RNA sequence: GGGAACGACUCGAGUAGAGUCGAAAAACGAGUGAGUUACGACUCACUCGACUUUUAAUGCUACCCAAAGGUCUUGACAAGUCGAUAAAACGCAGAGUCAAAAAGUCCGACGUUACGACGUCGGACAACGAGCGAGUUCUGUUCGCAGAACUCGCAAGUAGUUAUCUAUCUUCGGAUAGAUAACUACAAAAGAAACAACAACAACAAC
Reactivity to DMS in 0.01 (KOAc 150mM, MgCl2 10mM, bicine 150mM(pH8.5), 24C), signal-to-noise 2, nucleotides 027 to 156: a120c020g040a000g000u000g000a060g020u000u010a090c300g010a180c000u000c000a020c000u000c000g000a010c070u000u000u000u010a000a040u000g000c020u000a080c000c040c000a070a190a130g020g000u020c030u000u000g010a110c050a080a150g040u000c040g000a140u000a070a100a070a100c030g010c090a040g020a180g000u000c040a020a020a110a070a170g000u000c000c030g040a020c000g010u000u000a190c170g070a060c000g000u000c010g000g010a000c000a000a030c120g000a090g020c020g010a080g000u000u000c010u020g010u000u000c230g010c000a020g000a000a000c040u000c010g060c010a010a030
Reactivity to 2A3 in 0.01 (KOAc 150mM, MgCl2 10mM, bicine 150mM(pH8.5), 24C), signal-to-noise 6, nucleotides 027 to 156: a010c000g000a000g000u000g000a010g000u040u080a110c230g040a020c070u010c010a000c000u000c000g000a010c000u030u070u020u180a160a100u160g030c030u080a110c000c010c000a050a070a030g080g020u060c050u060u030g000a020c020a090a080g040u160c040g060a100u100a180a140a030a020c020g000c020a020g030a040g150u040c040a040a010a030a030a030g000u000c000c000g000a000c000g010u020u040a070c270g000a000c000g080u000c000g000g000a000c000a000a000c020g040a010g000c010g000a000g000u000u000c000u000g040u030u070c180g000c070a000g000a000a000c000u000c020g000c000a000a000